[RMDB]
RNA sequence: GGGAACGACUCGAGUAGAGUCGAAAAGUGAGGUUCUCCCAGGCGAUGCCGGGGCUGAGGGUCAGGUACCAAGCCUUGACGGCUGACCAGACGGCCUUGUCGGUGAUGUGGUCCAUUACUCUGCCGCAGCCACCAACCGAUUCGUCGGUUGGUGGCUAAAAGAAACAACAACAACAAC
Reactivity to DMS in 0.01 (KOAc 150mM, MgCl2 10mM, bicine 150mM(pH8.5), 24C), signal-to-noise 1, nucleotides 027 to 126: g010u000g020a090g010g000u000u000c030u000c020c010c000a170g030g000c050g010a110u000g000c050c010g010g000g000g020c050u000g000a160g020g000g020u000c050a100g020g020u010a120c080c150a150a080g020c030c020u010u000g020a180c130g000g000c020u000g030a070c000c000a030g010a130c120g020g010c030c050u000u000g000u010c050g010g000u000g090a140u010g000u000g000g030u000c110c060a110u000u000a090c100u020c060u000g050c020c020g020c090
Chemical mapping of a 177-nucleotide RNA with DMS. The reactions ran in a buffer of 150 mM KOAc, 10 mM MgCl2 and 150 mM bicine (pH 8.5), at 24 C.